[RMDB]
RNA sequence: GGGAACGACUCGAGUAGAGUCGAAAAGAACGGCAGAGAGCCGAGAAAUGAGACGAGGUAGAGGGCGCGCUCUACCAAAAGAUGUGUGUAAAAACGCACGUGUAGGCGCGGCUACACAUCUCAAGAAACGAUUAUGAGGCUUCGGCCUCAUAAUCGUAAAAGAAACAACAACAACAAC
Reactivity to DMS in 0.01 (KOAc 150mM, MgCl2 10mM, bicine 150mM(pH8.5), 24C), signal-to-noise 1, nucleotides 027 to 126: g110a100a240c040g030g020c050a230g000a240g010a300g160c020c000g040a220g000a120a090a240u000g000a000g000a060c060g000a070g000g050u000a030g000a120g020g000g000c000g000c000g000c040u120c000u000a000c000c050a020a010a030a040g090a020u010g000u000g010u000g000u000a010a110a000a270a070c000g000c000a010c040g000u050g100u010a000g000g000c000g020c000g050g020c020u000a050c040a070c000a040u010c000u040c000a060a100g000a150a100
Reactivity to 2A3 in 0.01 (KOAc 150mM, MgCl2 10mM, bicine 150mM(pH8.5), 24C), signal-to-noise 2, nucleotides 027 to 126: g030a020a010c010g000g010c160a000g090a040g010a040g200c000c000g110a040g040a040a090a090u120g040a000g000a040c140g010a120g100g000u000a000g040a030g100g070g060c010g000c000g000c000u210c000u030a000c010c010a010a000a000a090g230a120u300g000u010g000u000g010u000a070a140a000a000a000c000g060c000a000c010g090u120g040u090a010g020g000c000g000c000g010g000c020u040a000c010a000c000a000u010c000u010c000a000a020g080a110a030

Conditions: 150 mM KOAc, 10 mM MgCl2 and 150 mM bicine (pH 8.5), 24 C.
Structure probing data (DMS and 2A3) for a 177-nucleotide construct.
2A3 adducts were read by reverse transcription with SuperScript II with manganese.
Reactivities are given for positions 27 through 126.